[RMDB]
RNA sequence: GGGAACGACUCGAGUAGAGUCGAAAACGACAUGGCUUCGGCCAUGUCGAAAGGACGAGUGAGAGCGAAACGGAGGUAGGUCCAACUACCUUCUCACUCAAAAAAUCCGUUUGUUCGCAAACGGAAAUCUUAUAUGCACGUUCGCGUGCAUAUAAGAAAAAGAAACAACAACAACAAC
Reactivity to DMS in 0.01 (KOAc 150mM, MgCl2 10mM, bicine 150mM(pH8.5), 24C), signal-to-noise 2, nucleotides 027 to 126: c010g020a010c000a010u000g010g000c000u010u020c200g030g000c010c000a000u000g000u000c000g010a020a060a090g030g010a100c220g000a020g000u010g000a030g020a080g030c140g010a060a090a090c280g000g010a020g000g030u000a000g000g000u000c120c160a080a240c010u000a000c000c000u000u000c000u010c010a010c010u010c000a000a020a050a060a080a090u000c010c000g010u000u000u000g000u000u010c220g010c020a000a000a000c000g000g000a010a050a060
Reactivity to 2A3 in 0.01 (KOAc 150mM, MgCl2 10mM, bicine 150mM(pH8.5), 24C), signal-to-noise 2, nucleotides 027 to 126: c020g010a010c000a010u000g010g000c020u070u030c170g070g000c000c000a000u010g000u010c000g000a010a000a000g040g030a040c110g010a000g030u020g000a040g000a020g060c130g090a140a090a050c080g070g020a010g000g000u010a010g000g050u060c060c010a040a090c020u000a000c000c000u070u000c000u000c000a010c010u000c000a060a030a010a020a000a060u010c010c000g000u010u000u020g030u020u040c260g010c110a000a010a000c000g000g010a060a000a000